RNA sequence: GGGAACGACUCGAGUAGAGUCGAAAAACUUUGGCCGACGCUGCUAGCCGGGUGCGCACUGCUGUCUGGCCCGGCGCCGCGCUAGGGCGCACGUUUCGCUCUGCGGAGGGUAACCGGGCUGAAAUAAUUCCUGGUAGAAGUUCGCUUCUACCAGGAAAAAAGAAACAACAACAACAAC
Reactivity to DMS in 0.01 (KOAc 150mM, MgCl2 10mM, bicine 150mM(pH8.5), 24C), signal-to-noise 1, nucleotides 027 to 126: a110c070u000u000u000g010g010c030c000g010a090c090g000c030u000g030c030u000a100g010c040c020g000g000g010u000g000c060g000c030a110c070u000g000c020u010g020u000c060u000g000g010c000c020c000g010g010c200g020c020c020g010c020g060c020u010a000g030g000g000c000g020c100a110c280g020u000u020u000c000g030c000u000c000u000g010c000g010g000a090g040g000g020u010a100a240c040c020g020g020g020c000u000g000a020a070a110u000a140a170
The record gives the reactivity of an RNA of 177 nucleotides to DMS. It was measured as part of the RMDB library M2PK90. The RNA was probed in 150 mM KOAc, 10 mM MgCl2 and 150 mM bicine (pH 8.5) at 24 C. For DMS, 956 sequencing reads were counted. Reactivities are given for positions 27 through 126.